[RMDB]
RNA sequence: GGGAACGACUCGAGUAGAGUCGAAAAAUCCUAAUUAUGAUGCCUUGUUGAUUUCUAUGACUAAUCAUAGUUUCAGUGUGCAAAAACACAUUGGCGCUCCAGCAAACUUGCGUGUUGUUGGUCAUGCAUAGGGCAUGGUUCGCCAUGCCCAAAAGAAACAACAACAACAAC
Reactivity to 2A3 in 0.01 (KOAc 150mM, MgCl2 10mM, bicine 150mM(pH8.5), 24C), signal-to-noise 1, nucleotides 027 to 129: a000u000c000c000u000a000a000u020u010a050u300g270a000u000g010c020c040u000u000g000u000u000g000a300u080u050u000c000u000a130u000g160a140c000u100a070a300u050c000a000u000a030g060u000u020u020c000a000g000u000g190u000g000c010a210a020a010a020a020c010a000c000a000u000u000g000g000c010g000c000u150c000c000a120g100c100a000a000a300c000u000u230g000c060g110u130g040u140u140g000u000u000g060g000u000c000a070u000g000c000a090u000a100
Chemical mapping of a 170-nucleotide RNA with 2A3.